[RMDB]
An RNA of 177 nucleotides, treated with DMS and 2A3 and read out base by base. It was measured as part of the RMDB library OK2TRN. The DMS profile rests on 2,078 reads.
RNA sequence: GGGAACGACUCGAGUAGAGUCGAAAAGGAGCUAGCGUAUCGAUCCACAUGUAGUACGUCUGAUCGAUCCAUCAUGUACUAUCAUGUACACGCUAUCUAGCAGAUGAUGGUACACUAGGUACACUAGUCAGUUCCAUCGUUUCGACGAUGGAACUGAAAAAGAAACAACAACAACAAC
Reactivity to DMS in 0.01 (KOAc 150mM, MgCl2 10mM, bicine 150mM(pH8.5), 24C), signal-to-noise 3, nucleotides 027 to 126: g000g010a090g020c000u000a020g030c040g000u000a010u010c060g000a090u010c070c220a070c030a060u000g010u000a070g000u000a030c020g030u000c180u010g010a060u000c120g000a120u000c120c130a070u000c010a050u010g000u000a000c010u000a010u010c060a040u000g000u000a150c200a100c140g000c060u010a080u000c080u000a030g000c020a100g010a070u000g010a030u000g000g020u000a020c040a060c040u000a050g000g000u010a050c150a090c030u000a060g000
Reactivity to 2A3 in 0.01 (KOAc 150mM, MgCl2 10mM, bicine 150mM(pH8.5), 24C), signal-to-noise 3, nucleotides 027 to 126: g160g000a060g030c000u020a010g000c030g020u010a020u070c050g070a030u030c060c050a030c020a030u090g010u040a010g000u010a020c040g060u000c130u060g030a070u060c130g070a060u000c040c020a050u070c010a060u070g000u000a010c000u010a030u270c010a000u080g040u080a030c030a000c090g000c010u030a130u230c060u130a030g040c020a010g020a120u130g000a010u040g020g020u040a010c050a010c020u020a020g010g100u150a020c100a020c030u030a010g100